[RMDB]
RNA sequence: GGGAACGACUCGAGUAGAGUCGAAAAGUGCCGGCAAUACAGUGUGUAUGGAGGUCUCAAUGGCUCGGAAGUGCCAGCAAACCGGCGUAGAUAUUAGCAGACGUAUGGCCGUAAGACUUUUAUUGAAAAAAGUACAUAAGCUUCGGCUUAUGUACAACCCCUACAAAGUCUUCGGACUUUGUAGGGGAAAAGAAACAACAACAACAAC
Reactivity to 2A3 in 0.01 (KOAc 150mM, MgCl2 10mM, bicine 150mM(pH8.5), 24C), signal-to-noise 1, nucleotides 027 to 156: g060u070g170c010c000g030g000c000a030a030u040a000c080a040g090u100g010u030g030u160a060u190g050g030a040g020g050u000c020u010c020a030a240u030g000g020c000u020c030g050g010a060a030g040u020g160c000c000a010g060c090a100a020a040c040c000g030g000c040g100u150a110g040a150u050a070u130u140a070g000c020a000g000a100c040g000u000a020u060g020g000c000c050g020u020a030a030g020a030c000u020u130u160u100a170u090u170g020a080a140a000a000a000a000g000u000a000c000a000u010a000a000g030c000u000u030c080g050g000c000u000u030a010u000g000u000a000c000a000a000

About this RNA: Conditions: 150 mM KOAc, 10 mM MgCl2 and 150 mM bicine (pH 8.5), 24 C. This 207-nucleotide RNA was probed chemically with 2A3. For 2A3, 512 sequencing reads were counted.